[RMDB]
RNA sequence: GGGAACGACUCGAGUAGAGUCGAAAAGGGGUCGGUGCAGUUCUUCAUGUAAGAGCUUGGAUUUAUGGAGCUGAAGCCUCCACGGCUCCAUUGUCAGCUUAUCAUGAAGUCUGCACCGACGGAGGCACCCAAACGUGAAGUAUUCGUACUUCACGAAGAAUCGUAAUGUAUUCGUACAUUACGAUUCAAAAGAAACAACAACAACAAC
Reactivity to 2A3 in 0.01 (KOAc 150mM, MgCl2 10mM, bicine 150mM(pH8.5), 24C), signal-to-noise 7, nucleotides 027 to 156: g170g010g030g010u000c010g000g000u000g000c010a010g020u180u120c010u010u000c000a010u010g030u060a210a140g030a080g180c130u240u300g130g000a030u140u230u130a010u060g000g000a000g000c000u010g020a100a000g020c000c000u000c000c010a010c000g010g000c000u000c000c010a000u000u000g000u000c030a060g020c020u040u030a050u210c010a000u000g000a000a000g000u000c000u000g000c000a000c000c000g000a000c000g000g000a000g000g000c000a050c000c000c000a040a070a010c010g000u000g000a000a000g000u010a010u030u130c160g000u000a010c000u000u010c000a000c000g010a050a050
Reactivity to DMS in 0.01 (KOAc 150mM, MgCl2 10mM, bicine 150mM(pH8.5), 24C), signal-to-noise 3, nucleotides 027 to 156: g020g000g030g010u000c000g020g030u000g010c020a010g020u000u010c010u010u000c000a040u000g030u010a050a110g000a140g040c120u000u020g020g010a030u000u000u000a040u000g010g000a030g030c010u000g010a080a140g010c080c000u000c010c020a300c050g010g010c020u010c000c010a020u000u000g030u000c050a210g020c010u000u000a160u000c020a040u000g000a050a020g020u010c000u000g000c000a020c000c000g000a000c020g000g020a050g040g040c020a180c010c000c000a080a090a190c000g010u000g030a000a030g010u000a030u000u000c300g010u000a030c010u000u000c000a010c010g010a050a110